[RMDB]
Source information: Chemical mapping of a 177-nucleotide RNA with 2A3 and DMS. For 2A3, 711 sequencing reads were counted. For 2A3 the reverse transcriptase was SuperScript II with manganese. The DMS profile rests on 1,692 reads.
RNA sequence: GGGAACGACUCGAGUAGAGUCGAAAAUCGAAGGGGUUAAAGCUCAACCCUUGACGAGGACUUCGGCUGAGCAAUGGGAGGCCUAGACGAUUUUUGCAACGAUCCUAUCGCCGCACAAAAGCUCGUGUGAGGUGCGGCGAUUCGUCGCCGCACCUCAAAAAGAAACAACAACAACAAC
Reactivity to 2A3 in 0.01 (KOAc 150mM, MgCl2 10mM, bicine 150mM(pH8.5), 24C), signal-to-noise 2, nucleotides 027 to 126: u060c020g010a030a040g000g010g000g010u050u260a160a130a040g100c010u100c090a000a090c010c000c050u000u030g030a000c010g000a050g040g010a020c020u030u030c050g080g000c060u070g000a020g090c050a020a180u120g010g020g000a060g000g030c000c000u020a020g020a200c040g000a050u080u020u020u030u180g300c130a200a040c130g000a110u060c000c020u010a010u050c010g020c030c000g030c020a000c010a010a070a000a020g010c100u100c100g110u070g070
Reactivity to DMS in 0.01 (KOAc 150mM, MgCl2 10mM, bicine 150mM(pH8.5), 24C), signal-to-noise 2, nucleotides 027 to 126: u010c020g030a240a110g000g000g040g000u000u000a180a190a120g010c110u020c080a080a030c000c000c000u010u000g000a070c030g000a000g040g030a080c080u020u030c190g000g050c060u010g000a200g000c070a020a130u000g010g000g000a270g000g010c060c030u060a020g000a160c070g020a060u010u010u010u000u030g020c080a090a080c200g000a150u020c050c000u000a000u000c110g020c080c030g040c090a130c090a040a050a140a200g000c020u000c000g030u000g040